[RMDB]
RNA sequence: GGGAACGACUCGAGUAGAGUCGAAAAGGCCAGGAAAGCCAGCGUCAGAUAGCCGCUGAACGGUGAAAGCGGCAUCCGGAAUUUCGGCCGCUGCAGCUGCCCGGCGUUCGCCAUCCGGUGGAGCCGCGAGUGUUAAGAACUUCGGUUCUUAACACUCAAAAGAAACAACAACAACAAC
Reactivity to DMS in 0.01 (KOAc 150mM, MgCl2 10mM, bicine 150mM(pH8.5), 24C), signal-to-noise 4, nucleotides 027 to 126: g020g010c010c020a100g010g000a060a070a070g030c030c010a020g020c040g010u020c050a120g000a090u020a120g030c030c020g000c010u010g000a060a140c090g010g010u030g000a120a120a040g010c010g000g010c010a030u020c020c020g000g010a070a120u000u010u010c040g010g000c070c010g020c040u000g000c080a100g000c030u000g000c030c030c020g000g000c030g000u000u010c040g000c070c090a130u040c100c050g000g020u010g000g000a150g000c000c020g000c170
Reactivity to 2A3 in 0.01 (KOAc 150mM, MgCl2 10mM, bicine 150mM(pH8.5), 24C), signal-to-noise 7, nucleotides 027 to 126: g050g000c010c020a030g050g040a130a080a010g040c020c010a010g010c010g060u050c010a020g030a150u120a060g010c020c000g000c020u080g050a110a060c060g100g080u120g060a130a090a010g000c000g010g000c010a010u000c010c000g030g070a100a090u080u150u160c020g020g010c000c020g000c020u050g010c010a030g000c010u060g020c010c010c000g000g000c010g040u030u040c030g000c020c000a080u080c080c070g030g010u020g020g030a020g010c010c010g030c050